Chemical mapping of a 177-nucleotide RNA with DMS and 2A3. Source: RMDB library OK1LIB, as collected in RNAgym. For DMS, 2,487 sequencing reads were counted. The RNA was probed in 150 mM KOAc, 10 mM MgCl2 and 150 mM bicine (pH 8.5) at 24 C.
RNA sequence: GGGAACGACUCGAGUAGAGUCGAAAACGCCAAUUCCAUUUCCAAAGCUUACAGAGGUACGAUCCGCGCAGAGGGCAAGAAGAAACUGCUGAUUCGCAACUUGCCAGCCGCACCCGGGUGCACUCGAGAAUAGUCGGUCAUUCGUGACCGACUAUUCAAAAGAAACAACAACAACAAC
Reactivity to DMS in 0.01 (KOAc 150mM, MgCl2 10mM, bicine 150mM(pH8.5), 24C), signal-to-noise 2, nucleotides 027 to 126: c080g000c020c000a060a080u020u010c040c080a050u010u000u010c020c030a080a040a110g020c010u000u000a050c120a100g040a100g000g020u060a090c140g020a040u000c020c040g070c050g050c110a040g000a120g010g000g000c020a070a030g000a040a070g000a050a040a050c070u020g000c140u000g010a200u020u000c120g020c110a040a120c020u010u020g010c000c040a040g070c000c010g050c120a030c060c110c020g000g030g010u000g010c060a120c020u000c020g020a210
Reactivity to 2A3 in 0.01 (KOAc 150mM, MgCl2 10mM, bicine 150mM(pH8.5), 24C), signal-to-noise 4, nucleotides 027 to 126: c060g050c020c010a010a020u100u000c030c010a040u080u030u020c020c010a130a070a020g000c030u090u060a060c050a040g070a030g030g050u060a030c030g040a080u010c020c000g010c010g000c050a040g010a100g090g030g000c030a030a000g080a060a010g070a070a120a080c080u080g020c010u070g050a300u120u170c100g000c020a040a060c020u020u020g020c010c000a030g020c000c000g010c010a020c000c020c000g070g000g000u040g020c040a050c090u020c030g060a060